[RMDB]
RNA sequence: GGGAACGACUCGAGUAGAGUCGAAAAGAAAGAAAGAAGAUGAAAGAAUUCGGAGGAACUCUUGCUGUGAUAUGUUGCCGUAAAAGAUUCAUAUCACAGCAGUAGUUACCUGGUAUUCUUUCGCCAAACACAGACUGUGUUUCGACACAGUCUGUGUAAAAGAAACAACAACAACAAC
Reactivity to 2A3 in 0.01 (KOAc 150mM, MgCl2 10mM, bicine 150mM(pH8.5), 24C), signal-to-noise 5, nucleotides 027 to 126: g100a010a090a010g160a060a090a010g130a040a050g090a100u270g000a000a010a000g010a010a010u050u040c070g100g070a050g040g010a010a000c000u000c010u020u030g000c000u010g000u000g000a000u000a000u020g060u040u070g200c130c030g060u110a070a110a020a020g060a020u030u000c000a000u000a000u000c000a000c000a000g010c000a000g000u010a000g000u000u020a240c000c000u020g020g000u040a010u010u000c000u000u000u000c020g020c030c010a060a100
Reactivity to DMS in 0.01 (KOAc 150mM, MgCl2 10mM, bicine 150mM(pH8.5), 24C), signal-to-noise 2, nucleotides 027 to 126: g040a110a110a060g020a090a070a080g000a120a140g000a090u040g000a020a010a000g010a000a010u000u000c020g000g020a020g010g000a070a000c000u000c010u000u000g010c020u000g010u010g020a020u000a010u000g000u040u030g020c080c060g030u030a060a090a060a120g000a200u000u010c000a000u000a000u010c030a000c000a010g010c000a000g020u010a000g000u010u000a060c020c000u000g010g000u020a010u010u000c010u010u000u000c000g010c070c080a060a090